[RMDB]
RNA sequence: GGGAACGACUCGAGUAGAGUCGAAAAGGACUUGCAGUUUAGUACAUGUAGAUUUGGAAUCAAGUGCAAGCUUAAAUCAACAAUGCCUGUCAAAGCCGAUAAUUAAUGCUAUCAUCACUGCUACAACCGGACGAAGUAAGUUCGCUUACUUCGUCCGAAAAGAAACAACAACAACAAC
Reactivity to 2A3 in 0.01 (KOAc 150mM, MgCl2 10mM, bicine 150mM(pH8.5), 24C), signal-to-noise 2, nucleotides 027 to 126: g040g020a050c010u000u050g060c010a110g020u030u040u070a060g000u070a080c040a050u050g050u090a030g040a260u050u100u090g010g060a120a020u080c060a020a030g100u040g000c020a020a000g000c000u070u130a060a090a070u080c010a020a070c000a030a110u120g010c030c020u000g080u070c060a020a020a020g030c060c020g000a090u080a050a000u210u060a030a020u080g040c000u020a000u070c000a020u060c010a010c020u020g030c000u060a040c030a040a030c030
Reactivity to DMS in 0.01 (KOAc 150mM, MgCl2 10mM, bicine 150mM(pH8.5), 24C), signal-to-noise 2, nucleotides 027 to 126: g010g000a070c040u000u000g000c020a020g010u000u000u000a060g000u010a160c080a020u020g040u010a080g000a170u010u020u000g000g000a100a140u010c170a030a070g010u010g020c060a010a080g000c040u000u000a070a060a070u000c080a050a120c150a020a080u000g010c040c010u000g040u020c030a060a120a070g010c040c060g040a110u000a050a090u000u010a030a020u000g000c040u000a040u000c040a030u010c100a020c110u000g030c050u000a040c130a050a100c130
Structure probing data (2A3 and DMS) for a 177-nucleotide construct.
The reactions ran in a buffer of 150 mM KOAc, 10 mM MgCl2 and 150 mM bicine (pH 8.5), at 24 C.
Source: RMDB library OK2TST, as collected in RNAgym.